[RMDB]
RNA sequence: GGGAACGACUCGAGUAGAGUCGAAAACACCAAGUUCGCUUGGUGCAUGAAUCCUAAGUCACCUAAGACAGCAGAUUCGACGAAGUUAUCGGAAACGAUAACAGAGAAUCUCGCAAUGACGGGUGAUAUGGAGACCAGAUCUCCUUCGGGAGAUCAAAGGAAAGUAUCCUUUCGAGGAUACUUUCCUAAAAGAAACAACAACAACAAC
Reactivity to 2A3 in 0.01 (KOAc 150mM, MgCl2 10mM, bicine 150mM(pH8.5), 24C), signal-to-noise 4, nucleotides 027 to 156: c000a000c010c000a000a010g010u060u120c230g040c190u000u010g020g010u010g010c010a020u130g080a100a060u000c010c010u030a100a020g010u000c000a000c010c000u040a090a050g100a160c040a030g030c000a000g010a010u000u000c000g020a070c020g050a300a010g010u000u000a000u020c010g000g030a090a050a060c010g000a000u000a000a000c000a010g010a000g000a010a000u000c010u070c140g000c050a100a280u100g040a040c040g000g000g000u000g000a010u010a030u050g010g000a050g030a040c010c040a030g010a010u000c000u010c020c000u000u040c260g060g000g000a010g000a010u000c020a050a060
Reactivity to DMS in 0.01 (KOAc 150mM, MgCl2 10mM, bicine 150mM(pH8.5), 24C), signal-to-noise 2, nucleotides 027 to 156: c000a070c000c000a040a000g000u000u000c300g010c030u000u000g040g020u000g050c040a080u000g010a090a080u000c000c020u000a130a220g020u000c020a070c000c000u010a100a280g050a280c110a130g030c020a030g040a030u010u000c000g020a300c150g010a160a140g020u000u000a030u010c000g040g000a260a080a300c020g020a020u000a000a060c000a160g020a300g010a030a020u000c000u000c000g080c000a190a130u000g000a110c090g070g000g020u010g000a010u000a060u000g030g000a080g000a090c030c030a020g000a040u030c000u030c000c000u000u030c280g020g030g040a010g020a020u010c020a050a300
This 207-nucleotide RNA was probed chemically with 2A3 and DMS.
DMS (dimethyl sulfate) methylates the pairing face of unpaired adenines and cytosines.
For 2A3 the reverse transcriptase was SuperScript II with manganese.
The RNA was probed in 150 mM KOAc, 10 mM MgCl2 and 150 mM bicine (pH 8.5) at 24 C.
The 2A3 profile rests on 4,368 reads.